RNA sequence: GGGAACGACUCGAGUAGAGUCGAAAAUGGAACAAGAUGUUGUCCUUCAAGCCGGAUGCCUUCACCAAGAACAACGAGGAGGGCGUGGAUCGGGUGAAGCUGAGCAAGGGUACCUAUGCCUUCCUAACCCCUCCUACCAGUUCGCUGGUAGGAGGGGAAAAGAAACAACAACAACAAC
Reactivity to 2A3 in 0.01 (KOAc 150mM, MgCl2 10mM, bicine 150mM(pH8.5), 24C), signal-to-noise 1, nucleotides 027 to 126: u300g080g000a090a170c110a100a060g000a090u190g050u160u000g000u000c000c000u050u060c020a080a000g000c030c050g150g000a090u080g050c000c060u020u000c000a030c060c000a020a090g000a030a030c050a000a000c040g030a000g030g000a000g000g090g000c050g020u000g020g020a160u090c000g000g030g030u090g010a000a000g000c140u270g010a000g000c030a000a080g020g090g020u020a050c000c000u070a010u110g000c000c000u000u000c000c000u030a030a030